[RMDB]
RNA sequence: GGGAACGACUCGAGUAGAGUCGAAAAGUGCGGAGUGAAAUUCAUAGGAGCCUCUCCAUUAUGGCUGAACGCCGCGGUAGUCCGCGUAGUCGCGACGUAAACGUUCUGUGUUCGCGUUCAGGCCUCACGAUGGGUAGGGUUUCGACCCUACCCAUCGAAAAGAAACAACAACAACAAC
Reactivity to DMS in 0.01 (KOAc 150mM, MgCl2 10mM, bicine 150mM(pH8.5), 24C), signal-to-noise 1, nucleotides 027 to 126: g010u000g040c090g010g010a080g000u000g000a070a070a120u000u030c080a120u000a120g030g010a080g000c060c020u000c040u000c050c030a130u020u010a060u000g000g000c030u000g020a050a030c000g010c000c020g010c000g010g000u020a110g000u000c090c060g040c000g020u000a040g030u020c040g020c030g010a030c040g010u000a040a070a120c070g000u030u020c110u000g020u000g010u000u010c100g000c020g010u000u010c020a030g000g000c010c010u000c190a100